Chemical mapping of a 207-nucleotide RNA with DMS and 2A3.
RNA sequence: GGGAACGACUCGAGUAGAGUCGAAAAGGACCUGCUGAGGGGUCCGACAUAGCCUCAGCCUCUAGCCUGUCACUCACCAGGCGAAUCAUGUGAGUGUUGAUGCUUUUGCAUCUUAAUCUGACUGAGUCGUAGCAGUCUCAUGAACUAUGACAUUAGAAGGAUGCUAUUUAUUCGUAAAUAGCAUCCUAAAAGAAACAACAACAACAAC
Reactivity to DMS in 0.01 (KOAc 150mM, MgCl2 10mM, bicine 150mM(pH8.5), 24C), signal-to-noise 2, nucleotides 027 to 156: g010g000a030c030c030u000g020c020u000g000a150g030g030g020g000u020c000c020g030a060c060a060u000a120g020c030c020u000c030a110g000c010c110u000c060u000a190g020c020c020u020g030u000c040a030c020u000c010a050c020c020a090g020g020c020g000a100a050u010c170a020u050g020u000g010a060g030u010g040u010u000g010a120u000g000c000u000u000u000u000g020c010a090u000c020u010u000a090a170u010c060u000g020a140c050u010g020a110g000u000c040g020u000a070g020c010a110g020u000c100u010c160a070u000g000a100a090c030u000a040u000g010a050c040a180u010u000a090g010a210
Reactivity to 2A3 in 0.01 (KOAc 150mM, MgCl2 10mM, bicine 150mM(pH8.5), 24C), signal-to-noise 6, nucleotides 027 to 156: g020g000a000c010c000u040g010c010u020g020a000g020g020g010g000u000c010c000g010a010c020a080u160a030g060c000c000u000c000a000g010c000c010u100c040u060a020g000c000c000u010g020u030c010a010c010u000c000a010c000c000a000g000g010c020g040a030a030u130c040a020u110g000u000g000a000g010u000g040u050u110g010a010u000g010c030u060u210u230u300g000c000a010u000c000u010u130a100a110u080c130u140g020a010c000u000g000a010g020u000c000g000u000a000g000c010a000g030u000c050u060c150a110u240g070a070a040c010u000a000u020g000a000c010a040u070u150a050g090a110
For 2A3 the reverse transcriptase was SuperScript II with manganese. Values cover nucleotides 27 to 156. Values are in units of 0.01, from 0 to 300, in steps of 10. The RNA was probed in 150 mM KOAc, 10 mM MgCl2 and 150 mM bicine (pH 8.5) at 24 C.